RNA sequence: GGGAACGACUCGAGUAGAGUCGAAAAUAAAAAUGAAUUAUGACUAAACGCCUUCUAACUUAAUGCUUUCGGACGGGGAUCCCCGGCAAAUAACGUAAGAGGAUUUUUAUUUGUGCAUGUGUUCCUGAUUCAAUUAAAAAUUCGUUUUUAAUUGAAUAAAAGAAACAACAACAACAAC
Reactivity to 2A3 in 0.01 (KOAc 150mM, MgCl2 10mM, bicine 150mM(pH8.5), 24C), signal-to-noise 7, nucleotides 027 to 126: u050a010a030a010a010a010u090g070a040a060u160u030a070u200g050a020c030u060a100a130a040c060g030c010c000u060u050c040u090a060a120c020u070u130a100a050u120g020c010u040u080u110c040g070g030a050c020g010g000g060g050a100u090c020c010c000c000g000g000c020a010a050a220u060a040a010c040g040u030a040a030g030a030g100g010a030u060u050u020u010u050a080u030u050u060g070u070g060c070a070u110g050u030g000u070u000c000c000u000g000
Reactivity to DMS in 0.01 (KOAc 150mM, MgCl2 10mM, bicine 150mM(pH8.5), 24C), signal-to-noise 4, nucleotides 027 to 126: u020a000a050a040a040a060u020g000a110a100u020u010a020u020g010a130c070u010a070a100a110c100g010c030c030u010u010c050u000a070a090c060u010u020a080a160u010g000c040u000u000u010c100g000g010a050c040g010g000g010g000a090u010c040c010c040c100g020g000c050a020a040a060u000a040a060c160g010u010a040a040g010a090g000g000a030u010u010u000u010u000a030u000u000u000g020u010g010c060a070u010g020u020g010u000u000c010c000u000g000
The record gives the reactivity of an RNA of 177 nucleotides to 2A3 and DMS. It was measured as part of the RMDB libraries RFM100 and RFMREP. Conditions: 150 mM KOAc, 10 mM MgCl2 and 150 mM bicine (pH 8.5), 24 C.